Notes
The record gives the reactivity of an RNA of 207 nucleotides to DMS and 2A3. For 2A3 the reverse transcriptase was SuperScript II with manganese. It was measured as part of the RMDB library RNAMAK.

RNA sequence: GGGAACGACUCGAGUAGAGUCGAAAACCAAGGUUCGCCUUGGAUAAAACCUUUGUGACUAGAGGAAGAUGUAGUCCGUAGGGCCCAUUGGGCCUCAAGGACGCAGAUAUCUUCUCCCCACCUAGUCACUCUGGUCCGAGACCACGUUCGCGUGGAAAUAUCCGGGUGAAUUCGUUCACCCGGAUAUAAAAGAAACAACAACAACAAC
Reactivity to DMS in 0.01 (KOAc 150mM, MgCl2 10mM, bicine 150mM(pH8.5), 24C), signal-to-noise 1, nucleotides 027 to 156: c030c010a060a050g010g010u010u000c200g040c030c020u000u000g000g000a270u000a020a080a100a070c000c010u020u000u000g000u010g030a010c020u000a060g000a300g020g000a020a030g020a030u000g040u010a140g020u000c000c000g000u000a150g000g010g000c000c000c000a300u010u010g050g020g020c030c020u000c020a090a240g010g020a050c000g050c190a090g000a120u000a050u000c010u000u000c000u000c160c080c030c020a300c250c020u000a020g000u000c030a030c000u000c020u010g000g030u010c060c080g020a300g000a110c010c000a040c020g030u000u000c300g010c140g070u000g000g000a030a090
Reactivity to 2A3 in 0.01 (KOAc 150mM, MgCl2 10mM, bicine 150mM(pH8.5), 24C), signal-to-noise 1, nucleotides 027 to 156: c000c000a020a010g050g030u020u130c190g090c070c000u030u000g000g050a060u180a120a140a010a040c030c000u000u000u000g020u000g000a000c000u000a000g000a010g060g000a020a000g000a010u040g040u130a110g030u020c000c000g110u160a020g040g000g000c030c000c060a210u260u300g010g000g000c020c000u020c020a040a020g000g000a000c000g000c000a000g040a020u110a050u150c010u020u000c000u050c030c030c000c010a060c020c000u000a000g000u010c000a000c000u000c010u000g000g000u110c000c000g180a120g030a090c000c000a020c040g040u140u120c200g010c000g090u010g000g040a000a150